This 207-nucleotide RNA was probed chemically with 2A3.
[RMDB]
RNA sequence: GGGAACGACUCGAGUAGAGUCGAAAAGGAAGGGUAGAAAGGUGCAGGCCAUCGUGCGCCCCGGCGUGCCCGUGGUCUUCACCCCCGGGCAGCGGAGCCAGCGCAGGAUCAAGAGGGACUACGAUGAGGUGUACGCGGACGAGGACAUCCUCGACCAGAUACUCGUACGUUUCGACGUACGAGUAUCAAAAGAAACAACAACAACAAC
Reactivity to 2A3 in 0.01 (KOAc 150mM, MgCl2 10mM, bicine 150mM(pH8.5), 24C), signal-to-noise 2, nucleotides 027 to 156: g040g000a010a010g040g000g030u060a030g040a050a060a120g060g020u010g010c010a000g010g010c030c040a050u100c060g150u020g020c040g020c000c030c000c070g260g060c080g070u040g000c010c040c000g030u020g000g000u040c000u180u120c100a100c030c000c000c010c050g010g000g000c040a050g010c040g010g010a040g050c050c020a020g000c010g000c010a020g010g000a040u080c090a040a050g020a030g090g010g020a010c010u120a040c110g080a050u080g030a030g040g020u040g030u090a060c080g000c090g060g010a040c030g010a000g010g020a080c020a100u270c000c000u050c020g020a060c000c000a010
Conditions: 150 mM KOAc, 10 mM MgCl2 and 150 mM bicine (pH 8.5), 24 C. The data come from the RNA Mapping Database (RMDB), library OK3TST.